Source: RMDB libraries RFM100 and RFMREP, as collected in RNAgym. Chemical mapping of a 177-nucleotide RNA with 2A3 and DMS. The RNA was probed in 150 mM KOAc, 10 mM MgCl2 and 150 mM bicine (pH 8.5) at 24 C.

RNA sequence: GGGAACGACUCGAGUAGAGUCGAAAAGCCGCCGGGUUCGCCCGGCGGGAAGGGUGAAACGCGGUAACCUCCACCUGGAGCAAUCCCAAAUAGGCAGGCGAUGAAGCGGCCCGCUGAGUCUGCGGGUCACGCCAUUAUUUUUCGAAAUAAUGGCGUGAAAAGAAACAACAACAACAAC
Reactivity to 2A3 in 0.01 (KOAc 150mM, MgCl2 10mM, bicine 150mM(pH8.5), 24C), signal-to-noise 6, nucleotides 027 to 126: g060c010c000g000c010c010g030g000g030u030u070c140g090c020c000c010g000g010c000g000g000g010a030a000g030g010g000u070g030a100a080a020c050g010c030g040g050u070a040a060c000c000u020c010c010a090c020c040u070g040g010a040g010c020a020a090u060c010c000c010a030a150a040u170a040g060g010c050a020g000g020c020g080a100u070g070a090a030g050c030g020g040c020c030c010g010c020u040g010a050g090u050c060u060g000c000g030g000g020u010
Reactivity to DMS in 0.01 (KOAc 150mM, MgCl2 10mM, bicine 150mM(pH8.5), 24C), signal-to-noise 3, nucleotides 027 to 126: g010c030c010g050c000c000g000g000g000u020u040c160g020c020c000c000g010g020c000g010g000g000a030a030g010g000g040u000g010a060a060a090c070g010c050g010g000u010a140a110c080c020u020c040c040a050c040c010u020g010g000a060g010c110a140a110u000c010c000c010a050a090a140u040a080g020g010c020a010g010g000c060g010a100u030g000a090a120g000c100g010g000c030c020c000g000c010u010g010a160g010u000c070u000g000c010g000g000g000u000